[RMDB]
RNA sequence: GGGAACGACUCGAGUAGAGUCGAAAACUUUGGUGAGGCCCUAUCUAGUAUAGCAAUCCACCAAGCAGGUGACUUCACACAAUUCAGGUUCUCAGAGAAAAUGCGCCCUGACUUGACAGGUAUGGUCGAUUAGGGUAAUAUUCGUAUUACCCUAAUCAAAAGAAACAACAACAACAAC
Reactivity to DMS in 0.01 (KOAc 150mM, MgCl2 10mM, bicine 150mM(pH8.5), 24C), signal-to-noise 9, nucleotides 027 to 126: c050u000u010u010g000g020u010g000a040g000g010c260c300c000u000a020u000c020u050a100g010u040a040u000a020g000c080a080a270u030c050c020a020c020c010a020a050g020c120a070g000g010u020g010a080c060u020u010c040a070c040a100c080a040a080u010u010c050a050g000g000u010u020c030u000c020a070g010a120g020a050a050a090a050u020g000c060g010c300c010c000u000g010a070c060u010u000g000a090c060a050g000g000u010a050u010g010g010u000c110
Reactivity to 2A3 in 0.01 (KOAc 150mM, MgCl2 10mM, bicine 150mM(pH8.5), 24C), signal-to-noise 9, nucleotides 027 to 126: c010u020u030u100g030g000u020g020a080g030g020c010c020c000u010a020u020c050u040a060g140u160a060u030a050g030c040a040a060u020c010c010a010c010c000a030a020g050c040a020g030g090u060g040a060c030u040u050c040a020c000a000c010a060a110u070u060c020a030g030g020u090u040c040u020c030a030g050a010g080a090a100a030a020u100g020c020g030c020c000c000u040g030a070c020u070u080g030a040c020a050g040g060u140a100u130g070g020u060c050